[RMDB]
RNA sequence: GGGAACGACUCGAGUAGAGUCGAAAAAUACUGAUAUCUCCAGAGAUAGUGUGCGGGGUCGCUCUCGCGGUAGUUUUGGCACAAAAUCAAUCUAGCGAUAGACGGAAGCGAACUGCCGUUAAAUAUCCGUGUGUGGGAAAUUCGUUUCCCACACACGAAAAGAAACAACAACAACAAC
Reactivity to 2A3 in 0.01 (KOAc 150mM, MgCl2 10mM, bicine 150mM(pH8.5), 24C), signal-to-noise 3, nucleotides 027 to 126: a000u160a070c060u050g040a040u020a010u160c040u000c050c000a000g030a000g020a140u160a080g090u100g000u050g100c050g000g020g000g000u000c000g000c000u000c000u000c010g010c020g010g040u000a000g010u010u050u150u130g180g000c110a090c090a190a090a000a030u090c050a020a020u020c010u040a010g050c040g070a040u010a020g040a040c060g040g070a100a010g030c030g010a030a050c000u070g070c010c010g000u030u010a060a150a000u200a070u030c030
Reactivity to DMS in 0.01 (KOAc 150mM, MgCl2 10mM, bicine 150mM(pH8.5), 24C), signal-to-noise 2, nucleotides 027 to 126: a040u050a080c090u010g010a130u010a070u030c010u000c050c140a060g000a100g000a050u000a020g030u010g000u030g020c040g000g000g010g060u010c010g000c030u000c030u030c000g000c000g000g000u000a030g000u030u000u020u000g050g040c090a070c140a030a080a080a140u020c080a150a010u000c010u000a080g010c300g000a120u000a020g000a090c300g010g010a060a070g000c050g000a010a010c000u000g000c000c030g000u010u010a030a010a080u020a010u050c080

The data come from the RNA Mapping Database (RMDB), library OK1LIB. The record gives the reactivity of an RNA of 177 nucleotides to 2A3 and DMS. Conditions: 150 mM KOAc, 10 mM MgCl2 and 150 mM bicine (pH 8.5), 24 C. For 2A3 the reverse transcriptase was SuperScript II with manganese. For 2A3, 1,807 sequencing reads were counted. Values cover nucleotides 27 to 126.